RNA sequence: GGGAACGACUCGAGUAGAGUCGAAAAUACAUUCGCCACUCUAGGAGGGACGAUGUACUGCAAUGAAUCUUAGCCGUUCGCGAGUGCAAUCUUACAGAUAUAAAGUCCGCCACAGGAUUUGUCAUUAAUAUGCCCUCACUUUCGAGUGAGGGCAUAUAAAAGAAACAACAACAACAAC
Reactivity to 2A3 in 0.01 (KOAc 150mM, MgCl2 10mM, bicine 150mM(pH8.5), 24C), signal-to-noise 1, nucleotides 027 to 126: u020a000c000a010u010u070c000g030c010c000a300c060u030c000u010a070g130g070a020g030g100g000a000c000g000a000u000g020u090a050c030u010g000c050a070a300u100g250a050a000u000c000u050u020a010g030c000c000g060u080u000c080g000c020g010a020g000u050g000c020a030a000u000c000u000u120a120c000a070g220a100u010a000u030a140a120a000g060u000c050c000g010c080c070a060c020a120g010g000a020u060u090u240g150u130c000a000u000u160a030
Reactivity to DMS in 0.01 (KOAc 150mM, MgCl2 10mM, bicine 150mM(pH8.5), 24C), signal-to-noise 1, nucleotides 027 to 126: u000a030c070a060u000u000c010g000c020c030a050c000u000c110u010a150g000g020a050g000g020g090a070c020g000a100u000g000u000a000c020u020g000c010a030a080u000g000a010a030u000c000u000u040a110g000c000c030g030u000u000c070g000c140g000a080g010u030g000c080a020a040u000c060u020u010a040c140a070g000a110u000a040u000a140a040a100g000u000c010c030g010c050c070a070c110a100g000g020a070u020u010u000g000u010c080a060u000u020a110

Chemical mapping of a 177-nucleotide RNA with 2A3 and DMS. For DMS the reverse transcriptase was MarathonRT. Source: RMDB library OK1LIB, as collected in RNAgym. Conditions: 150 mM KOAc, 10 mM MgCl2 and 150 mM bicine (pH 8.5), 24 C.